RNA sequence: GGGAACGACUCGAGUAGAGUCGAAAACGCUGGGUAUAAUAUUUAGGACAGGGAGCUGAAGCGCGCACGGCGAAGAACUGUCCAGGAAUUCUAUACCUGUGCUGAAGCGCGCACGGCAACCGAAAGGUGCGGGGUAACAACGUUUCGACGUUGUUAAGCUAAUUAGAAAAUUCGUUUUCUAAUUAGCAAAAGAAACAACAACAACAAC
Reactivity to 2A3 in 0.01 (KOAc 150mM, MgCl2 10mM, bicine 150mM(pH8.5), 24C), signal-to-noise 3, nucleotides 027 to 156: c030g000c030u040g000g040g000u010a020u040a140a080u120a200u140u270u180a050g010g000a000c000a010g010g010g000a010g000c010u040g020a190a040g020c010g010c000g000c010a010c020g010g010c030g060a090a010g020a040a000c000u000g000u000c000c000a010g030g100a060a090u200u040c040u050a000u000a020c000c000u050g060u110g060c030u090g040a080a020g000c010g000c000g010c010a010c030g050g000c030a110a160c020c010g050a120a030a020g000g010u010g010c000g000g000g000g010u010a010a000c010a000a000c000g000u030u110u130c250g060a010c010g000u000u010g000u000u010a020a010
Reactivity to DMS in 0.01 (KOAc 150mM, MgCl2 10mM, bicine 150mM(pH8.5), 24C), signal-to-noise 1, nucleotides 027 to 156: c040g020c020u020g010g040g060u000a010u000a010a130u000a150u000u000u000a250g040g000a040c000a010g000g020g000a130g030c030u000g010a050a090g010c030g000c040g020c010a300c040g010g010c010g000a100a210g020a090a160c000u000g000u000c000c020a130g010g030a050a130u010u000c150u000a070u000a020c010c000u010g000u000g020c030u000g000a100a040g010c010g040c020g000c000a130c060g010g020c000a110a290c020c010g030a080a110a150g010g010u000g000c090g020g030g000g030u030a020a040c010a010a000c000g030u000u000u000c220g010a080c040g000u000u010g010u000u010a040a220